Record summary:
Chemical mapping of a 207-nucleotide RNA with 2A3. As a SHAPE reagent, 2A3 marks flexible, mostly unpaired nucleotides at the ribose 2'-OH.
RNA sequence: GGGAACGACUCGAGUAGAGUCGAAAAAUCAGACUAGCGAUGCAUGAUGCCUGUUAGGCGGCUAAUGUUCAGCGAAACCUUAAUAGCAUGACUAUGAACGUAGAUGUCUAAGUGCCGAUAUGCUUGGACAGGGGUUCGACUCCCCUCGUCUCCAUAUUCUUUUGCUUUUCUUCGGAAAAGCAAAAGAAAAAGAAACAACAACAACAAC
Reactivity to 2A3 in 0.01 (KOAc 150mM, MgCl2 10mM, bicine 150mM(pH8.5), 24C), signal-to-noise 2, nucleotides 027 to 156: a000u040c040a020g040a100c050u090a030g020c030g050a040u190g010c000a000u010g040a050u120g020c000c010u080g050u180u050a070g000g180c010g000g000c030u030a060a020u060g000u030u120c110a010g000c000g040a050a020a000c000c010u110u150a020a020u060a080g080c080a060u090g080a100c060u060a030u100g040a050a000c030g000u040a050g000a110u030g050u020c030u000a080a010g000u010g110c030c000g010a020u020a030u140g040c060u050u140g010g010a020c030a060g030g000g000g020u000u110c020g000a010c030u020c020c010c000c020u010c050g040u030c000u000c010c010a030u030a090u070
Conditions: 150 mM KOAc, 10 mM MgCl2 and 150 mM bicine (pH 8.5), 24 C. The 2A3 profile rests on 738 reads.